An RNA of 177 nucleotides, treated with DMS and 2A3 and read out base by base.
For DMS, 1,148 sequencing reads were counted.
The data come from the RNA Mapping Database (RMDB), library RFM100.
2A3 adducts were read by reverse transcription with SuperScript II with manganese.
[RMDB]
RNA sequence: GGGAACGACUCGAGUAGAGUCGAAAAUUUAGUUACUUAUUUUGAAAUGUAAAUAGCGCAACAGGUGCCAUAUACAAACUGCCUUUUUUUCGUUUUAGUUUACUUAUUGUGAAAUGUAAAUAUGUCCUACGGACCAUCAAUUCGUUGAUGGUCCGUAAAAAGAAACAACAACAACAAC
Reactivity to DMS in 0.01 (KOAc 150mM, MgCl2 10mM, bicine 150mM(pH8.5), 24C), signal-to-noise 1, nucleotides 027 to 126: u010u010u000a020g000u000u000a110c060u000u000a060u000u000u030u030g000a010a060a090u020g000u000a020a050a060u000a090g020c100g010c300a150a100c300a000g000g020u030g050c060c150a040u020a180u020a110c220a090a160a050c240u030g000c000c010u000u000u000u000u000u000u000c000g060u000u000u040u030a050g000u000u080u000a000c010u000u000a050u020u000g000u040g000a020a020a020u000g000u000a010a000a010u000a090u010g030u000c000c030
Reactivity to 2A3 in 0.01 (KOAc 150mM, MgCl2 10mM, bicine 150mM(pH8.5), 24C), signal-to-noise 2, nucleotides 027 to 126: u220u010u000a000g040u000u000a000c000u120u110a010u120u120u040u120g100a010a050a090u050g010u080a110a040a000u000a030g050c020g000c000a050a050c000a200g020g020u050g100c070c100a140u220a000u000a150c080a020a010a050c050u100g030c070c030u010u010u030u000u000u000u050c050g010u000u000u070u030a110g000u130u000u000a060c000u000u150a050u130u180g110u000g070a000a000a100u020g000u100a000a000a080u230a110u150g080u010c000c000